[RMDB]
RNA sequence: GGGAACGACUCGAGUAGAGUCGAAAACGUUGUCGUUAUCUUAAUGCUAAUCGCGAUUGUAUUAUCCAGCGUUUUAACCGGGGUAUUAAUGUUUUUAUAGAUAUCCGAUGUCUGAGCCAAUAUGGUUGUCACAACAUUAAUUCGUUAAUGUUGUGACAAAAGAAACAACAACAACAAC
Reactivity to DMS in 0.01 (KOAc 150mM, MgCl2 10mM, bicine 150mM(pH8.5), 24C), signal-to-noise 2, nucleotides 027 to 126: c110g030u010u010g020u010c120g010u010u010a070u000c040u000u000a080a130u020g000c020u010a090a060u010c160g020c040g000a060u010u000g010u020a030u010u010a040u010c040c010a040g000c020g020u000u000u020u010a070a140c080c060g010g000g000g020u010a040u000u000a090a040u020g000u010u000u020u030u010a060u010a210g010a020u000a030u010c020c040g030a070u000g010u020c040u000g000a080g000c020c030a050a060u010a070u010g020g020u000u000
Reactivity to 2A3 in 0.01 (KOAc 150mM, MgCl2 10mM, bicine 150mM(pH8.5), 24C), signal-to-noise 4, nucleotides 027 to 126: c020g000u010u040g020u030c090g060u040u030a160u170c040u020u130a060a020u040g040c040u010a060a090u120c040g010c040g120a070u000u120g020u070a060u080u020a000u040c020c000a000g020c010g010u020u000u000u090a050a020c030c030g000g000g000g070u030a010u030u070a100a140u050g090u020u130u010u040u090a150u050a100g020a010u040a000u030c010c040g010a040u050g070u030c040u030g040a020g000c030c000a030a010u160a130u220g120g000u040u030